The data come from the RNA Mapping Database (RMDB), library TTRDEL.
The record gives the reactivity of an RNA of 177 nucleotides to DMS.
For DMS the reverse transcriptase was MarathonRT.
In probing experiments dimethyl sulfate is read out at A N1 and C N3, which are open when not base-paired.
RNA sequence: GGGAACGACUCGAGUAGAGUCGAAAAGAUAUGGACUAAGAGCGAUAAGAACAUAUCGGAAACGAUAUAGUUCUUUUGACGCUCGAUGUCCUAAGUCAAAAGCAGGCAUUGUUCGCAAUGCCUGCAACGCUGUAGCACGGUUCGCCGUGCUACAGCGAAAAGAAACAACAACAACAAC
Reactivity to DMS in 0.01 (KOAc 150mM, MgCl2 10mM, bicine 150mM(pH8.5), 24C), signal-to-noise 1, nucleotides 027 to 126: g030a040u020a250u010g010g000a010c000u010a300a170g000a000g030c000g000a120u010a010a000g010a010a020c000a040u000a000u000c000g000g000a060a050a090c000g030a030u000a000u000a140g020u000u000c000u000u000u000u000g020a130c030g020c000u010c000g000a030u000g000u020c010c000u010a010a170g000u010c000a060a060a140a160g020c000a000g000g030c020a030u000u000g020u000u060c250g000c020a020a000u020g020c000c000u010g020c020a010a020